An RNA of 177 nucleotides, treated with 2A3 and DMS and read out base by base. The DMS profile rests on 1,867 reads. For 2A3, 927 sequencing reads were counted. DMS adducts were read by reverse transcription with MarathonRT.

RNA sequence: GGGAACGACUCGAGUAGAGUCGAAAAAGGGAUCUGCGUCAACAUUCUUGGCCCGCAGGCCAUGGUGCAGAUAGUCGCAAGACUUGGCGAGACCAUCGCUCAAAUGACGACCGCAUGGGCCGGGGUCUUGACCGUUGACAUUCGUGUCAACGGUCAAAAAAGAAACAACAACAACAAC
Reactivity to 2A3 in 0.01 (KOAc 150mM, MgCl2 10mM, bicine 150mM(pH8.5), 24C), signal-to-noise 2, nucleotides 027 to 126: a000g100g010g010a060u040c050u080g000c120g000u020c020a060a030c010a140u120u070c000u080u030g000g000c020c000c000g140c080a040g010g000c040c000a040u110g050g000u090g050c000a000g010a050u060a020g000u000c000g010c070a090a000g020a150c030u060u060g010g000c050g010a000g030a100c060c110a150u000c010g040c010u170c070a030a050a020u090g020a090c020g000a040c030c050g060c040a030u060g030g010g020c010c010g000g000g000g000u000c040
Reactivity to DMS in 0.01 (KOAc 150mM, MgCl2 10mM, bicine 150mM(pH8.5), 24C), signal-to-noise 2, nucleotides 027 to 126: a170g030g010g000a090u020c110u000g050c070g000u000c030a040a140c150a140u040u010c100u010u040g000g000c020c000c070g040c140a060g010g000c000c000a090u000g000g000u000g050c000a010g030a170u010a040g010u000c000g000c110a100a090g000a090c040u000u000g000g020c030g000a020g000a180c140c180a020u000c040g010c020u050c140a070a090a090u020g050a190c050g000a010c100c060g000c230a090u010g010g030g030c000c000g000g000g000g010u000c020